[RMDB]
An RNA of 177 nucleotides, treated with DMS and 2A3 and read out base by base. For DMS the reverse transcriptase was MarathonRT. The RNA was probed in 150 mM KOAc, 10 mM MgCl2 and 150 mM bicine (pH 8.5) at 24 C. For DMS, 2,428 sequencing reads were counted. It was measured as part of the RMDB library OK2TRN.
RNA sequence: GGGAACGACUCGAGUAGAGUCGAAAACGAAAGUUGGCGUGCGAUCCCUUUCAGGAGCGUGCUCUUGCCGCUGCCGUUCGGACCGAUGAGUGCCGUCACUUCGCCCUCGGGGACGGUUACAGACUCGAUUAGGCGAGUGAUUCGUCACUCGCCUAAUAAAAGAAACAACAACAACAAC
Reactivity to DMS in 0.01 (KOAc 150mM, MgCl2 10mM, bicine 150mM(pH8.5), 24C), signal-to-noise 3, nucleotides 027 to 126: c050g000a070a090a050g000u000u020g030g020c060g010u000g000c020g010a100u000c020c020c040u000u000u010c190a140g010g010a050g040c030g030u010g020c010u000c100u010u010g010c010c030g020c010u000g010c150c020g020u010u000c070g010g010a110c100c040g000a120u010g010a180g020u000g010c030c000g020u000c000a050c020u000u010c070g010c020c020c030u000c050g000g000g020g000a060c040g020g010u010u010a040c070a140g010a300c090u000c030g010
Reactivity to 2A3 in 0.01 (KOAc 150mM, MgCl2 10mM, bicine 150mM(pH8.5), 24C), signal-to-noise 1, nucleotides 027 to 126: c040g000a070a010a060g060u170u140g050g000c020g090u080g030c010g020a110u070c000c000c000u040u040u060c060a030g010g010a040g060c020g090u170g060c040u000c070u130u100g020c000c000g030c000u020g150c010c000g020u090u080c060g060g010a060c030c030g040a140u130g040a000g060u080g020c020c000g020u000c000a060c080u100u090c030g020c000c020c000u020c020g010g010g000g000a050c000g000g000u060u000a030c050a040g040a040c000u020c030g000